About this RNA: Structure probing data (2A3) for a 177-nucleotide construct. Values cover nucleotides 27 to 126. The 2A3 profile rests on 582 reads.
RNA sequence: GGGAACGACUCGAGUAGAGUCGAAAAUAGCAUUUAUGUAACGUGUAAGUCUUUCAUUUUUUCAGAAUUAUAUCCAACUUUGAUCAACUAUAAAGUCUCUUGCACUUUUUAGGUAAAUUGUCAGCCCAAUCAGCGGAGUGUUCGCACUCCGCUGAUUAAAAGAAACAACAACAACAAC
Reactivity to 2A3 in 0.01 (KOAc 150mM, MgCl2 10mM, bicine 150mM(pH8.5), 24C), signal-to-noise 2, nucleotides 027 to 126: u160a000g000c040a030u080u000u000a010u100g280u010a070a030c040g010u060g000u000a020a020g000u010c010u030u030u090c050a050u020u020u000u040u070u040c030a040g050a040a020u290u120a140u020a050u300c040c010a000a010c030u040u030u000g000a040u140c000a000a090c010u050a010u030a150a020a020g060u000c040u070c010u140u020g010c050a000c000u220u050u040u060u030a100g040g040u030a060a020a050u070u150g020u080c040a010g000c020c010c000